The record gives the reactivity of an RNA of 177 nucleotides to DMS and 2A3. The 2A3 profile rests on 2,386 reads. For DMS the reverse transcriptase was MarathonRT. The RNA was probed in 150 mM KOAc, 10 mM MgCl2 and 150 mM bicine (pH 8.5) at 24 C. For DMS, 3,612 sequencing reads were counted.
[RMDB]
RNA sequence: GGGAACGACUCGAGUAGAGUCGAAAACGGGGAGGUCGCGCUCCGCGACGAAGGCAACUAUGCCGGUCCGACCAUCAACCGGACCGCGCGCCUGCGUGACUUGGCGCAUGGGGGCCAGACGGUGCUCCACCGUCGGUGGUUUCGACCACCGACGGUGAAAAGAAACAACAACAACAAC
Reactivity to DMS in 0.01 (KOAc 150mM, MgCl2 10mM, bicine 150mM(pH8.5), 24C), signal-to-noise 3, nucleotides 027 to 126: c020g000g000g000g060a040g020g020u010c050g010c040g000c050u030c030c110g010c040g010a100c040g020a100a060g000g010c010a140a040c270u050a130u060g000c020c050g000g000u010c010c010g030a010c040c100a130u100c300a130a190c090c010g000g010a000c020c030g020c090g030c050g000c060c020u000g030c030g000u000g000a120c030u010u030g000g000c040g000c060a080u000g000g000g010g010g040c040c030a110g000a120c140g000g020u020g000c020u000c010
Reactivity to 2A3 in 0.01 (KOAc 150mM, MgCl2 10mM, bicine 150mM(pH8.5), 24C), signal-to-noise 3, nucleotides 027 to 126: c010g020g050g010g030a020g000g070u050c000g000c000g020c030u060c000c050g000c020g030a050c030g040a050a030g000g010c020a100a020c140u160a120u300g020c040c000g020g000u000c000c000g000a050c040c020a260u200c040a040a050c020c000g000g000a000c010c010g000c020g000c040g010c050c000u040g010c010g010u040g010a050c070u040u080g030g000c010g000c040a090u120g010g000g010g000g060c010c000a020g040a060c060g030g030u100g020c020u000c000